[RMDB]
RNA sequence: GGGAACGACUCGAGUAGAGUCGAAAAUUAAUUACGAACUAAGUUUGUAAUAAUGAGCGUUGAGUGGAGCUGUUAAGAACAGCACCCGGCCACAUCUCACACGGCUUCUGUUCUGCGGGCUGUGAACUGAGAUGUCGAACAGCAGGACUAGGGGAGUUCUAACGAAAUACUUCGGUAUUUCGUUAGAAAAAGAAACAACAACAACAAC
Reactivity to 2A3 in 0.01 (KOAc 150mM, MgCl2 10mM, bicine 150mM(pH8.5), 24C), signal-to-noise 2, nucleotides 027 to 156: u070u020a020a070u020u000a010c010g000a010a000c020u180a260a110g050u030u010u050g000u030a020a040u060a070a040u100g030a040g080c080g070u170u100g060a080g060u270g050g010a060g000c020u010g030u040u150a200a080g070a120a020c000a000g000c000a060c000c000c000g020g020c020c000a030c000a040u020c000u000c000a020c000a000c010g010g010c000u040u020c060u140g040u030u020c030u040g010c030g030g000g000c030u010g000u000g090a100a090c100u100g000a000g000a010u030g060u030c020g040a090a070c010a030g000c010a000g000g010a010c010u050a050g020g000g000g000a060g050u010